Overview: Source: RMDB library M2PK90, as collected in RNAgym. Chemical mapping of a 177-nucleotide RNA with 2A3 and DMS. For 2A3 the reverse transcriptase was SuperScript II with manganese. DMS adducts were read by reverse transcription with MarathonRT.
[RMDB]
RNA sequence: GGGAACGACUCGAGUAGAGUCGAAAAGGAAAUAAUGCACAUAAUCCACUCGCAGACGCUAAAAAUAACGCUGCGUCGCGACGGAUGUGGCAACGCACACCGAAGUGCAAACGGUAGCGUAAAAAAAGUUAGUGAGGUACUUCGGUACCUCACUAACAAAAGAAACAACAACAACAAC
Reactivity to 2A3 in 0.01 (KOAc 150mM, MgCl2 10mM, bicine 150mM(pH8.5), 24C), signal-to-noise 2, nucleotides 027 to 126: g100g070a010a150a000u160a070a120u170g060c030a030c020a170u250a180a030u170c000c040a020c090u010c010g000c080a140g000a000c010g010c000u030a090a000a000a120a170u150a230a060c050g040c110u060g010c030g000u010c000g010c010g000a000c010g030g010a000u010g000u020g020g000c010a020a000c020g030c000a070c010a030c110c000g000a090a000g210u300g180c090a140a000a000c020g000g000u050a000g000c030g030u100a000a080a000a000a000a000a080
Reactivity to DMS in 0.01 (KOAc 150mM, MgCl2 10mM, bicine 150mM(pH8.5), 24C), signal-to-noise 1, nucleotides 027 to 126: g000g000a160a050a080u000a070a020u000g000c000a020c040a040u010a180a030u000c010c000a000c210u000c000g000c000a070g000a000c020g010c000u000a020a110a080a110a110u000a080a010c300g090c120u000g000c000g040u000c000g070c030g020a040c070g000g000a030u000g010u010g000g010c000a030a070c090g000c000a020c210a040c000c000g020a070a120g010u000g020c150a130a000a080c040g000g010u000a030g000c050g000u000a000a000a000a020a160a050a140